[RMDB]
RNA sequence: GGGAACGACUCGAGUAGAGUCGAAAAGAUGAACGCUGGCGGUAUGCUUAACACAUGCAAGUCGAACGAAGUCUUCGGACUUAGUGGCGGACGGGUGAGUAACGCGUGAGAACCUACCUCUAGGUUGUAUCUUGGAUGUCUUCGGACAUCCAAGAUAAAAAGAAACAACAACAACAAC
Reactivity to 2A3 in 0.01 (KOAc 150mM, MgCl2 10mM, bicine 150mM(pH8.5), 24C), signal-to-noise 1, nucleotides 027 to 126: g020a030u070g020a020a020c010g000c070u040g030g000c050g000g090u090a030u100g000c010u020u110a100a000c070a000c000a040u140g000c020a040a060g000u030c000g000a030a000c000g020a040a000g000u000c000u040u030c160g130g000a000c000u000u020a010g070u100g150g300c050g000g040a040c040g010g000g050u050g050a070g030u040a030a010c060g030c020g060u050g040a040g020a030a000c020c000u020a070c000c000u080c050u000a060g030g020u070u000g050
Reactivity to DMS in 0.01 (KOAc 150mM, MgCl2 10mM, bicine 150mM(pH8.5), 24C), signal-to-noise 3, nucleotides 027 to 126: g000a130u010g030a060a100c050g000c000u010g010g010c060g000g040u000a050u010g010c000u000u010a070a120c130a090c060a040u000g000c100a040a110g020u010c030g000a190a010c010g010a100a140g000u000c030u000u000c110g030g020a040c010u000u000a110g030u000g000g030c020g010g000a070c060g000g010g010u010g000a170g010u000a030a070c080g000c020g020u020g000a140g000a030a060c100c020u000a070c080c030u010c090u000a030g020g020u000u000g020
Source information:
An RNA of 177 nucleotides, treated with 2A3 and DMS and read out base by base. Reactivities are given for positions 27 through 126. The reactions ran in a buffer of 150 mM KOAc, 10 mM MgCl2 and 150 mM bicine (pH 8.5), at 24 C. For DMS the reverse transcriptase was MarathonRT. Source: RMDB library OK2TST, as collected in RNAgym.